[RMDB]
RNA sequence: GGGAACGACUCGAGUAGAGUCGAAAAGAUCGUCGCUCUGUGCGCGGCGCUCGUCGCAAUCGUCGCGCCGAAGGUGCUGAGCCGGCUGAAAAUCUGAGCCCGCGAUCGGCGAGCCUGCAAGAAAACAAAUACUACUAGGUUUCGACCUAGUAGUAUUAAAAGAAACAACAACAACAAC
Reactivity to DMS in 0.01 (KOAc 150mM, MgCl2 10mM, bicine 150mM(pH8.5), 24C), signal-to-noise 9, nucleotides 027 to 126: g000a080u000c030g020u000c050g010c040u000c040u000g020u010g020c090g020c020g010g010c040g010c060u000c060g000u000c120g010c190a120a080u000c040g010u000c090g020c040g010c010c020g010a070a070g010g020u000g010c060u000g000a100g020c060c080g010g000c040u010g000a070a070a120a100u010c060u000g000a140g010c020c030c100g000c040g010a050u000c030g010g000c020g010a050g010c020c020u000g010c110a090a090g010a080a060a080a090c190a090
Reactivity to 2A3 in 0.01 (KOAc 150mM, MgCl2 10mM, bicine 150mM(pH8.5), 24C), signal-to-noise 5, nucleotides 027 to 126: g020a060u060c020g040u020c010g010c020u040c050u110g130u080g040c020g000c000g030g000c030g010c000u020c020g120u060c050g030c100a020a120u070c020g060u030c020g020c010g000c010c000g020a090a060g070g020u070g020c030u030g010a020g040c030c040g020g000c040u080g080a090a070a010a120u040c050u040g010a010g030c000c020c020g010c010g030a100u080c010g020g000c000g010a020g020c000c020u030g050c060a080a050g080a130a100a010a010c080a020